[RMDB]
RNA sequence: GGGAACGACUCGAGUAGAGUCGAAAAGAGGAACUUGUCAAUGGAGGAAUAGGGAUGCCUGAGCCUCGACCUAUCUUAGCAUCACUAAAAUGGUGCAGGUAAACACUGUGAGCCUCCUGGUAGGAUGGCUAUGGAAGCUGUUCGCAGCUUCCAUAGCAAAAGAAACAACAACAACAAC
Reactivity to DMS in 0.01 (KOAc 150mM, MgCl2 10mM, bicine 150mM(pH8.5), 24C), signal-to-noise 3, nucleotides 027 to 126: g000a030g010g020a180a080c080u000u000g030u010c080a060a140u010g010g020a050g000g000a080a060u010a060g000g000g030a090u000g010c110c040u010g010a090g000c020c000u000c010g020a180c040c050u000a030u020c040u010u000a090g010c020a020u000c010a030c050u010a040a020a110a100u010g010g000u000g010c030a050g000g010u010a060a070a130c130a070c040u000g010u000g010a180g000c000c010u000c020c020u000g000g000u000a050g010g010a120u020g010
Reactivity to 2A3 in 0.01 (KOAc 150mM, MgCl2 10mM, bicine 150mM(pH8.5), 24C), signal-to-noise 2, nucleotides 027 to 126: g040a010g000g050a050a110c040u110u080g060u120c060a100a180u160g010g020a020g030g000a130a130u040a130g030g000g020a000u030g050c010c020u070g010a050g020c000c010u030c010g030a030c000c000u010a020u010c030u020u010a010g000c020a010u040c010a010c050u160a030a100a060a070u090g050g000u050g000c020a030g070g020u050a020a040a030c110a030c070u060g020u020g090a040g090c020c010u030c030c020u020g040g000u040a040g050g050a080u090g070